[RMDB]
RNA sequence: GGGAACGACUCGAGUAGAGUCGAAAAACAAGAUCGAGACCCGGCUUCGCCGUUACAAGCGCCGUCUGAAGUCGCGUGCACCUGCACAGCAAAAUGCGAUCUAUGACGACGUGGCAUAUCGUGUUAACCUAAAUAAAUCGUUCGCGAUUUAUUUAGGAAAAGAAACAACAACAACAAC
Reactivity to 2A3 in 0.01 (KOAc 150mM, MgCl2 10mM, bicine 150mM(pH8.5), 24C), signal-to-noise 7, nucleotides 027 to 126: a000c030a010a050g040a110u110c040g050a010g070a160c020c020c000g040g000c040u200u150c160g010c010c020g080u120u100a040c030a110a040g010c000g000c010c000g000u000c000u020g010a020a010g000u010c010g000c010g000u010g000c030a150c100c120u190g000c040a040c030a080g130c060a080a100a070a080u240g000c000g000a010u010c020u130a020u060g000a000c010g010a000c010g010u040g020g000c030a050u060a030u130c040g020u030g050u130u090a080a100
Reactivity to DMS in 0.01 (KOAc 150mM, MgCl2 10mM, bicine 150mM(pH8.5), 24C), signal-to-noise 7, nucleotides 027 to 126: a060c070a090a070g010a060u010c090g020a120g000a120c050c050c020g010g000c060u000u000c150g020c030c010g000u010u000a070c170a140a150g000c020g010c020c020g000u000c010u000g020a270a240g000u000c010g020c020g010u000g000c030a210c240c160u000g010c040a030c090a150g010c120a050a050a070a050u010g000c000g000a010u000c020u000a170u010g010a020c000g010a020c020g010u010g010g020c130a110u000a070u000c030g010u010g010u000u010a070a210
This 177-nucleotide RNA was probed chemically with 2A3 and DMS.
Values cover nucleotides 27 to 126.
DMS adducts were read by reverse transcription with MarathonRT.
The reactions ran in a buffer of 150 mM KOAc, 10 mM MgCl2 and 150 mM bicine (pH 8.5), at 24 C.